Overview
An RNA of 177 nucleotides, treated with DMS and 2A3 and read out base by base.
RNA sequence: GGGAACGACUCGAGUAGAGUCGAAAAUAUAGCUCGGCUGCGAUCGCGGGGAUGCUUUGACGGCACGCAAUGCGAUUGAGCACCUCGCGCUCGCGCGCGCUGAGCACCGGGGCCACGGGUGCCGCGCCACAGAGAUCAGAUUCGUCUGAUCUCUGUGAAAAGAAACAACAACAACAAC
Reactivity to DMS in 0.01 (KOAc 150mM, MgCl2 10mM, bicine 150mM(pH8.5), 24C), signal-to-noise 5, nucleotides 027 to 126: u020a110u010a110g020c010u000c010g020g030c030u010g030c010g010a010u000c000g030c000g000g000g000g010a130u000g020c000u000u000u020g040a050c170g000g020c010a060c140g010c300a120a220u000g010c010g010a100u000u000g010a020g000c010a030c010c000u000c010g010c010g000c060u000c000g020c020g020c130g020c160g010c020u010g010a060g010c000a070c070c000g010g000g000g020c070c050a120c090g010g000g020u000g010c020c030g010c070g010c140
Reactivity to 2A3 in 0.01 (KOAc 150mM, MgCl2 10mM, bicine 150mM(pH8.5), 24C), signal-to-noise 4, nucleotides 027 to 126: u240a030u060a030g000c000u010c050g040g000c040u080g000c020g000a010u000c000g000c000g000g040g020g000a150u020g000c020u000u050u210g110a090c070g120g080c050a020c090g160c050a080a120u160g010c030g170a130u050u120g020a000g010c000a000c000c000u010c000g010c020g000c000u010c000g010c000g000c010g020c030g000c010u040g010a020g000c010a000c010c020g030g000g050g020c000c080a120c210g160g030g010u110g020c030c010g090c020g020c010

For DMS the reverse transcriptase was MarathonRT.
Reactivities are given for positions 27 through 126.
The RNA was probed in 150 mM KOAc, 10 mM MgCl2 and 150 mM bicine (pH 8.5) at 24 C.
As a SHAPE reagent, 2A3 marks flexible, mostly unpaired nucleotides at the ribose 2'-OH.